[RMDB]
RNA sequence: GGGAACGACUCGAGUAGAGUCGAAAACUGGACAUGACGAUGAUCCAGAAGUACCUCGUGGCCGCUGCGGGCGCCCCCCGAGUGUACCACCACACGGCCCCAAUCUCGAUGGUCUACGCCUUCAGGGCCAUUUUACAAAGUUCGCUUUGUAAAAUGGAAAAGAAACAACAACAACAAC
Reactivity to DMS in 0.01 (KOAc 150mM, MgCl2 10mM, bicine 150mM(pH8.5), 24C), signal-to-noise 9, nucleotides 027 to 126: c010u000g000g000a030c010a030u000g010a150c290g000a060u000g000a150u000c000c010a010g010a120a100g010u000a100c020c010u000c090g020u000g000g010c240c020g010c030u000g010c090g000g010g010c030g010c020c050c020c030c020c010g010a070g010u010g010u000a050c030c060a090c050c040a070c090a060c090g010g000c020c000c030c050a080a090u010c060u000c060g010a080u000g010g010u000c050u010a070c100g010c020c010u000u000c030a060g010g010g010
Reactivity to 2A3 in 0.01 (KOAc 150mM, MgCl2 10mM, bicine 150mM(pH8.5), 24C), signal-to-noise 5, nucleotides 027 to 126: c000u000g000g010a000c010a020u100g070a080c120g260a040u050g030a160u000c000c000a000g010a030a020g030u030a060c000c020u030c050g040u060g010g010c030c010g080c080u070g050c090g110g120g010c030g020c020c000c000c010c010c010g010a020g000u060g010u010a050c010c020a020c030c010a030c010a010c040g060g000c010c010c000c020a030a050u050c050u020c060g060a050u040g000g040u020c050u060a020c060g010c000c000u010u060c020a020g010g010g000